The record gives the reactivity of an RNA of 177 nucleotides to DMS and 2A3. The 2A3 profile rests on 1,291 reads.
[RMDB]
RNA sequence: GGGAACGACUCGAGUAGAGUCGAAAAUGAUUCUGAUGAAAGGCCACCCUGGUUCUGGGAAGUCAACAGUGGCUCGCUGCUUAUCAGAGCUGACACGUAUCUGUAUAAUUGACAAGGAUGACGCCCGAGCAAAGUAUACGUUCGCGUAUACUUUGCUAAAAGAAACAACAACAACAAC
Reactivity to DMS in 0.01 (KOAc 150mM, MgCl2 10mM, bicine 150mM(pH8.5), 24C), signal-to-noise 3, nucleotides 027 to 126: u010g010a090u000u000c020u000g000a020u010g010a020a050a300g000g000c020c080a090c020c020c020u000g000g010u010u000c060u000g000g010g000a140a050g000u010c050a050a090c090a090g010u010g040g010c030u020c100g010c050u000g000c240u000u000a040u010c040a030g010a040g000c070u000g000a110c140a120c070g020u000a040u000c030u020g010u000a070u010a080a150u010u000g010a070c090a140a150g030g010a060u000g010a080c110g020c030c010c040g000
Reactivity to 2A3 in 0.01 (KOAc 150mM, MgCl2 10mM, bicine 150mM(pH8.5), 24C), signal-to-noise 2, nucleotides 027 to 126: u080g010a040u010u090c020u030g050a020u050g070a030a060a050g030g000c000c000a020c020c010c010u060g000g150u130u000c040u020g030g060g040a100a010g100u030c000a020a010c000a170g060u060g050g010c040u000c040g000c000u070g000c020u060u030a020u150c030a010g020a010g060c020u060g090a040c020a000c100g080u060a050u060c040u060g140u140a070u010a110a180u110u080g030a000c040a030a080g020g000a020u020g030a040c050g000c010c020c000g050